[RMDB]
RNA sequence: GGGAACGACUCGAGUAGAGUCGAAAACUGGUAACAAAAAAAUCGCCUUGUCGUCUCAUGCCUACGAUGGGCUAAAGAAGCACUGUGGCGAAACAUGCACUGGGUGGCCAUUGCGUCUGCGGUAGACCACUACUCAACGGUUCGCCGUUGAGUAGUGAAAAGAAACAACAACAACAAC
Reactivity to DMS in 0.01 (KOAc 150mM, MgCl2 10mM, bicine 150mM(pH8.5), 24C), signal-to-noise 1, nucleotides 027 to 126: c110u000g000g030u030a080a190c100a000a000a060a110a030a130a080u000c000g000c000c000u000u000g020u010c130g040u000c020u000c020a140u010g000c030c000u000a050c150g000a140u010g010g030g000c020u030a070a100a040g010a120a130g030c080a070c150u020g000u000g010g030c040g000a060a070a080c040a060u000g020c100a060c110u020g000g000g010u010g010g000c050c080a010u020u020g000c060g010u000c030u010g000c040g020g000u000a020g010a130c120
Reactivity to 2A3 in 0.01 (KOAc 150mM, MgCl2 10mM, bicine 150mM(pH8.5), 24C), signal-to-noise 1, nucleotides 027 to 126: c040u000g000g080u150a090a090c050a110a110a060a020a050a010a120u040c030g000c010c000u040u090g050u090c000g050u020c000u000c010a030u130g030c000c010u120a180c170g140a100u270g010g040g000c000u020a050a030a050g030a010a000g000c050a000c050u050g010u100g070g090c010g000a080a010a010c010a020u080g010c000a000c010u030g060g000g030u030g020g030c020c030a070u000u110g030c060g020u000c050u070g000c030g070g020u010a010g050a020c000
An RNA of 177 nucleotides, treated with DMS and 2A3 and read out base by base. Reactivities are given for positions 27 through 126. The 2A3 profile rests on 1,106 reads. The RNA was probed in 150 mM KOAc, 10 mM MgCl2 and 150 mM bicine (pH 8.5) at 24 C.